[RMDB]
RNA sequence: GGGAACGACUCGAGUAGAGUCGAAAAGUUCUGGAGGAGUAAGAACGUGACUAUUGAGACGAAUGGCUCUUCCUACUAUCUGACGAAGAGACGCCUCGUUCCAUGUCAUAUCUAAAAUGAAGAUAUCAUUAAUUGAGAAAAAACUAAUACCCUCGCCCAUAAUCAGUAAGUUCGCUUACUGAUUAUGAAAAGAAACAACAACAACAAC
Reactivity to DMS in 0.01 (KOAc 150mM, MgCl2 10mM, bicine 150mM(pH8.5), 24C), signal-to-noise 3, nucleotides 027 to 156: g010u000u000c040u010g000g020a080g010g000a120g030u010a050a140g000a090a080c040g040u010g010a030c020u000a200u000u000g020a050g000a050c020g000a050a070u000g020g020c000u000c010u000u010c020c020u050a130c100u010a140u010c150u000g040a120c080g010a050a030g010a070g020a060c050g010c070c050u010c010g000u000u000c020c010a070u010g000u000c000a030u000a060u000c020u000a070a080a070a100u000g010a100a130g000a120u000a070u000c020a060u000u000a050a150u010u000g010a140g000a010a050a080a090a050a080c060u000a070a130u000a070c010c000c010u000c010g030c090c040
Reactivity to 2A3 in 0.01 (KOAc 150mM, MgCl2 10mM, bicine 150mM(pH8.5), 24C), signal-to-noise 8, nucleotides 027 to 156: g030u040u030c040u100g050g010a030g030g030a130g040u060a060a030g050a120a030c070g010u010g010a000c030u060a100u130u190g040a130g020a040c020g030a090a110u140g020g000c000u000c000u020u020c030c010u030a120c030u050a100u170c120u110g070a080c060g020a030a010g010a010g020a050c060g050c020c020u000c000g010u090u000c010c000a010u010g000u010c010a010u010a070u050c030u080a050a080a080a070u070g030a050a080g060a140u110a050u120c020a020u020u200a180a120u150u100g020a040g050a050a090a010a020a010a030c050u050a030a050u040a080c000c000c010u000c020g030c010c010